[RMDB]
RNA sequence: GGGAACGACUCGAGUAGAGUCGAAAAGGAGCGGGAUUGGGCUCGAUUUCUGAUCGAUCCGGGGCAAGUGACCACUCUUCUGGAUUGUUUUCACGCAAUGAAGGAACAGUGUCAAUCGUGUGUGAGGUACUCAAGUCGGUUUCGACCGACUUGAGUAAAAAGAAACAACAACAACAAC
Reactivity to 2A3 in 0.01 (KOAc 150mM, MgCl2 10mM, bicine 150mM(pH8.5), 24C), signal-to-noise 3, nucleotides 027 to 126: g120g020a200g040c160g040g010g020a150u150u180g040g020g000c040u000c000g010a000u000u100u130c170u240g090a070u000c000g000a010u020c000c010g000g020g020g010c070a070a040g050u020g090a020c000c050a020c040u000c000u030u000c030u030g000g080a020u000u000g000u050u000u100u100c130a020c080g000c020a100a130u060g000a100a060g010g010a030a000c010a000g000u020g020u060c010a050a100u120c160g030u050g020u010g010u010g080a100g020g100
Reactivity to DMS in 0.01 (KOAc 150mM, MgCl2 10mM, bicine 150mM(pH8.5), 24C), signal-to-noise 2, nucleotides 027 to 126: g010g010a160g000c110g000g000g020a090u090u010g000g020g020c000u010c040g100a030u020u010u080c110u000g000a060u000c040g000a010u010c040c010g000g060g000g040c180a090a140g030u000g020a100c150c040a020c050u000c160u000u000c020u010g000g000a070u000u000g000u000u000u030u020c170a020c220g030c030a100a000u000g010a300a150g000g000a000a030c060a030g000u000g020u000c080a050a040u000c110g030u000g000u000g000u000g000a020g010g000

Notes: Conditions: 150 mM KOAc, 10 mM MgCl2 and 150 mM bicine (pH 8.5), 24 C. Chemical mapping of a 177-nucleotide RNA with 2A3 and DMS. The DMS profile rests on 1,704 reads. The data come from the RNA Mapping Database (RMDB), library OK1LIB.